[RMDB]
RNA sequence: GGGAACGACUCGAGUAGAGUCGAAAAAAUGUGCUUUAGACACUUCUUCUGGGUUUUAGCUUAUUUUAGUAAGAAACAUGUAGAAGUUUUUACUGAUGGUAAGCUUAAUUGUAGUUUCCAGGACGCUAGACAUUGCGCUUCGGCGCAAUGAAAAGAAACAACAACAACAAC
Reactivity to 2A3 in 0.01 (KOAc 150mM, MgCl2 10mM, bicine 150mM(pH8.5), 24C), signal-to-noise 3, nucleotides 027 to 129: a000a000u230g020u030g000c020u160u160u140a070g040a070c020a000c000u030u030c020u050u000c000u030g130g040g000u010u060u060u180a000g040c000u000u000a040u010u040u000u060a000g010u000a000a070g060a150a040a000c020a000u100g060u150a080g100a280a080g010u030u000u010u050u010a000c000u000g030a060u100g040g010u000a010a000g000c000u040u040a050a020u010u080g050u020a050g060u030u070u000c000c000a010g030g000a000c020g000c040u030a000g030a070
Reactivity to DMS in 0.01 (KOAc 150mM, MgCl2 10mM, bicine 150mM(pH8.5), 24C), signal-to-noise 2, nucleotides 027 to 129: a130a050u000g010u020g000c100u020u050u050a130g010a130c060a050c020u000u000c030u000u030c000u020g000g000g000u000u010u060u050a030g010c030u040u000a070u070u030u000u000a070g010u020a050a060g040a000a000a000c040a170u000g030u080a120g020a130a110g040u010u000u050u040u000a000c000u000g010a060u050g020g000u000a000a040g000c020u040u030a030a060u000u000g030u030a070g030u000u000u000c000c030a040g030g050a110c000g020c010u070a000g030a300